Structure probing data (2A3 and DMS) for a 207-nucleotide construct. The 2A3 profile rests on 4,196 reads.

RNA sequence: GGGAACGACUCGAGUAGAGUCGAAAACAAACUAAAUCAGCUACCCAAAUCUUAUUACUCUCUGUGACUGCGGCAAGAGUCGAGCAGCAACUGAAUGUUCUUAGGCAGCCCUAGAGUUUUAGAUCCAACUUAUUUUGGUUCCUUUAUUCAGGGUCUGACUUACUUAAAGUUUCGACUUUAAGUAAGUAAAAGAAACAACAACAACAAC
Reactivity to 2A3 in 0.01 (KOAc 150mM, MgCl2 10mM, bicine 150mM(pH8.5), 24C), signal-to-noise 6, nucleotides 027 to 156: c030a020a060a050c050u210a060a040a100u090c040a020g020c030u090a090c020c010c010a030a090a060u040c040u080u140a130u060u150a140c030u050c000u020c040u060g100u090g100a150c030u060g060c000g050g020c050a080a050g030a040g110u070c040g030a020g040c030a000g000c030a050a100c040u080g040a070a060u090g020u060u030c000u060u060a050g100g000c010a010g000c020c010c000u040a060g000a000g000u050u050u040u060a010g000a010u000c000c010a030a040c080u160u160a150u150u230u040u030g030g000u010u080c020c000u100u110u100a070u050u050c050a030g020g020g050u050c040u030g020
Reactivity to DMS in 0.01 (KOAc 150mM, MgCl2 10mM, bicine 150mM(pH8.5), 24C), signal-to-noise 2, nucleotides 027 to 156: c040a140a070a170c060u020a070a070a170u000c050a070g000c030u000a120c000c000c020a070a090a090u010c050u000u020a070u000u000a060c020u000c010u000c040u000g040u010g020a100c030u010g030c050g060g000c030a070a090g010a110g010u000c040g010a080g030c060a100g030c060a070a150c040u000g010a090a090u010g000u000u000c030u000u020a100g030g020c030a060g030c010c000c000u010a090g020a050g000u000u000u000u000a020g010a040u000c010c030a040a080c140u010u000a160u010u010u000u000g000g010u000u000c020c020u000u000u010a060u020u000c020a130g000g030g010u000c040u010g020
The RNA was probed in 150 mM KOAc, 10 mM MgCl2 and 150 mM bicine (pH 8.5) at 24 C.